[RMDB]
RNA sequence: GGGAACGACUCGAGUAGAGUCGAAAACUCUGACGCUUCGGCGUCAGAGAAACCACUAAGCAGAUUGGCGAGGACGACGCUGCGGAGCGCGUUUGCCAACAAAAACGCAUAGAUUCGUCUAUGCGAACGUUUACCAUGGAUUCGUCCAUGGUAAACGAAAAGAAACAACAACAACAAC
Reactivity to DMS in 0.01 (KOAc 150mM, MgCl2 10mM, bicine 150mM(pH8.5), 24C), signal-to-noise 3, nucleotides 027 to 126: c000u000c000u000g000a030c000g020c000u000u020c170g040g000c000g000u000c000a010g000a010g000a020a050a180c010c010a120c210u020a110a100g020c140a120g010a180u000u010g010g010c010g000a080g020g000a040c030g010a090c010g010c000u010g030c250g000g000a030g030c040g010c020g010u000u000u000g000c000c020a030a040c100a060a050a070a080a140c000g010c000a000u010a010g010a030u000u010c170g000u000c000u000a000u000g000c000g010a040a050
Reactivity to 2A3 in 0.01 (KOAc 150mM, MgCl2 10mM, bicine 150mM(pH8.5), 24C), signal-to-noise 4, nucleotides 027 to 126: c000u010c000u000g000a000c000g020c010u040u070c270g150g000c000g000u010c000a000g000a000g000a000a000a000c010c000a030c090u150a070a070g100c070a060g110a300u020u020g020g000c020g040a100g160g030a050c020g030a100c010g040c050u150g070c080g190g170a040g000c010g000c000g000u000u020u090g000c010c000a000a000c030a010a080a010a010a010c010g000c000a000u010a000g000a020u040u050c140g030u000c090u010a000u000g000c000g010a050a010